[RMDB]
RNA sequence: GGGAACGACUCGAGUAGAGUCGAAAAUGACGCUAUCGUAGCGGCCUUAGACUUAGAGAAGGCCCCAAUGCAUUACCAGUGGCUUCCGAACCGUCAGAACAUCAUUGAGGACCUUCCUAACGUUGGCCUUAAGGGUGAUGACCUGCAUACGUACCACCAAGAUACGAGUCUUCGGACUCGUAUCUUGAAAAGAAACAACAACAACAAC
Reactivity to 2A3 in 0.01 (KOAc 150mM, MgCl2 10mM, bicine 150mM(pH8.5), 24C), signal-to-noise 4, nucleotides 027 to 156: u120g030a030c050g020c060u050a050u160c030g080u060a000g010c030g030g010c000c010u090u110a100g010a090c010u040u030a020g070a010g010a140a000g030g000c000c000c000c010a010a000u020g000c050a060u040u100a110c030c040a060g070u040g070g000c020u170u130c100c110g070a100a100c010c020g060u080c020a030g050a100a060c040a020u080c010a000u010u030g010a200g050g050a070c000c000u000u020c000c010u010a030a000c110g020u030u060g010g000c000c040u060u050a100a080g040g000g010u070g050a110u140g060a110c020c000u030g000c010a050u010a060c020g030u030a080c000c050a040c000
Reactivity to DMS in 0.01 (KOAc 150mM, MgCl2 10mM, bicine 150mM(pH8.5), 24C), signal-to-noise 2, nucleotides 027 to 156: u010g010a090c030g020c010u010a050u010c050g020u000a070g020c050g000g000c020c010u000u010a150g010a080c060u000u010a070g010a220g020a020a020g020g030c030c020c010c010a030a030u000g040c140a120u010u000a000c030c070a280g030u010g000g020c000u010u070c160c100g000a040a130c080c030g000u000c020a060g000a060a150c100a120u030c010a040u000u020g000a130g070g010a010c010c010u000u000c010c010u000a020a030c120g010u000u000g000g020c020c020u000u000a050a150g000g010g000u000g000a070u000g000a080c020c010u000g000c050a120u000a070c040g010u010a150c030c010a130c190

An RNA of 207 nucleotides, treated with 2A3 and DMS and read out base by base. DMS adducts were read by reverse transcription with MarathonRT. Reactivities are given for positions 27 through 156. 2A3 adducts were read by reverse transcription with SuperScript II with manganese. The data come from the RNA Mapping Database (RMDB), library OK3TST.